Conditions: 150 mM KOAc, 10 mM MgCl2 and 150 mM bicine (pH 8.5), 24 C. An RNA of 207 nucleotides, treated with 2A3 and DMS and read out base by base.
[RMDB]
RNA sequence: GGGAACGACUCGAGUAGAGUCGAAAACGCUCUGGCCGCUCGACGACCGGACCGCCGCCGACGUCGAGACCGACCUCGCCGCACUCAGUGAGUCCUCACUGAUCGUUCGGUACGUCGUCACCGGCAAGCGCUACUUGGCCGUGUCCGGGUGGAAGGAAUGUACUAUCUGGUUCGCCAGAUAGUACAUAAAAGAAACAACAACAACAAC
Reactivity to 2A3 in 0.01 (KOAc 150mM, MgCl2 10mM, bicine 150mM(pH8.5), 24C), signal-to-noise 3, nucleotides 027 to 156: c060g030c040u070c080u140g180g050c020c000g050c030u010c000g070a090c040g030a060c010c060g040g030a150c010c060g060c040c010g000c030c050g050a060c040g010u030c010g030a060g050a130c070c030g020a010c000c010u050c120g030c030c000g000c010a030c010u020c000a000g030u000g010a040g130u180c070c120u060c080a000c010u000g020a040u110c050g010u000u010c000g000g020u050a160c040g000u000c000g020u040c030a010c090c020g020g000c020a020a010g010c040g020c070u120a100c060u060u140g040g000c050c040g080u070g070u120c030c020g020g050g010u030g000g070a070a050g040g030a120
Reactivity to DMS in 0.01 (KOAc 150mM, MgCl2 10mM, bicine 150mM(pH8.5), 24C), signal-to-noise 1, nucleotides 027 to 156: c060g040c050u000c010u000g020g010c000c030g060c020u000c070g020a040c000g000a130c020c000g000g020a270c050c150g050c090c080g010c090c020g000a050c020g010u000c040g020a160g000a100c110c040g010a070c030c040u000c030g030c000c040g010c080a250c060u000c000a030g060u000g010a060g030u020c110c090u000c010a050c000u000g030a040u000c030g050u000u010c030g040g000u020a060c030g040u010c030g020u020c040a080c170c000g000g010c000a100a080g030c000g040c040u000a050c050u000u010g020g000c000c010g040u010g040u000c010c020g010g040g000u000g000g010a130a080g020g010a120
The DMS profile rests on 2,890 reads. DMS adducts were read by reverse transcription with MarathonRT. It was measured as part of the RMDB library OK3TST.